[RMDB]
Description: This 177-nucleotide RNA was probed chemically with DMS and 2A3. For DMS, 1,410 sequencing reads were counted. It was measured as part of the RMDB library OK1LIB.

RNA sequence: GGGAACGACUCGAGUAGAGUCGAAAAUCUAUAAUAGGGUACUUGGUAUGCUGGCAAGGACAGAAAGGCGGUCUAGAAGGCCUCCGUCAAAAGGGAUGGACUGUAGUGGAUCUUUUGAUGAUAGCCAGAAUGUGACUACCUUCGGGUAGUCACAUUCAAAAGAAACAACAACAACAAC
Reactivity to DMS in 0.01 (KOAc 150mM, MgCl2 10mM, bicine 150mM(pH8.5), 24C), signal-to-noise 1, nucleotides 027 to 126: u060c010u000a110u030a160a120u000a060g000g030g030u010a010c060u020u000g000g010u100a010u000g010c090u000g010g040c100a060a120g000g000a110c060a120g050a050a100a160g020g000c090g000g020u000c030u010a100g040a090a110g000g000c000c060u000c000c000g000u000c080a120a020a040a030g000g000g000a170u020g000g010a050c090u000g020u020a080g000u000g000g000a110u020c020u000u000u010u000g000a010u040g000a150u060a110g010c010c020a060
Reactivity to 2A3 in 0.01 (KOAc 150mM, MgCl2 10mM, bicine 150mM(pH8.5), 24C), signal-to-noise 1, nucleotides 027 to 126: u000c000u000a160u190a260a190u170a070g010g030g110u030a100c050u060u070g010g000u110a020u100g030c000u020g000g090c000a040a030g210g070a040c000a000g050a030a080a000g010g030c010g090g020u020c040u040a240g090a260a010g010g000c000c000u060c000c000g020u030c030a040a050a040a030g050g050g040a000u120g040g020a000c040u200g140u070a020g120u100g020g000a050u080c010u040u060u000u240g030a140u120g040a030u020a010g030c050c000a000